[RMDB]
RNA sequence: GGGAACGACUCGAGUAGAGUCGAAAAUGCCGGGAUUAAACAGUAAUGCACCUCCUAAAAUAAUACAGCUGAGGGGUCAACCUGUAAAGUUCAACUCCCAGCAAAAGGCUUCGCUUAUAUUGGUGGAUAUGGGACUUAUAUUCGUAUAAGUCCCAUAAAAAGAAACAACAACAACAAC
Reactivity to 2A3 in 0.01 (KOAc 150mM, MgCl2 10mM, bicine 150mM(pH8.5), 24C), signal-to-noise 2, nucleotides 027 to 126: u060g040c000c000g030g010g000a040u070u050a110a170a080c000a030g060u080a020a140u130g000c040a010c000c010u080c010c000u060a080a080a010a070u180a060a150u120a110c050a030g030c050u060g020a100g050g000g010g000u020c010a030a020c000c030u030g070u190a080a230a020g020u040u000c000a010a030c040u000c020c000c000a000g010c020a020a090a000a000g040g000c000u030u070c030g020c010u130u060a070u050a050u300u140g040g000u060g020g000a030
Reactivity to DMS in 0.01 (KOAc 150mM, MgCl2 10mM, bicine 150mM(pH8.5), 24C), signal-to-noise 4, nucleotides 027 to 126: u010g020c010c020g010g020g020a070u010u000a080a150a090c030a050g010u010a130a110u010g010c060a070c030c030u010c020c030u010a070a060a080a100u010a070a090u000a090c190a080g020c110u000g010a070g020g010g000g010u000c200a070a090c260c030u010g020u020a060a100a090g000u000u000c100a080a050c070u000c000c010c000a030g000c050a050a040a060a030g010g010c060u000u000c080g010c050u000u010a060u010a140u010u000g000g010u000g010g010a130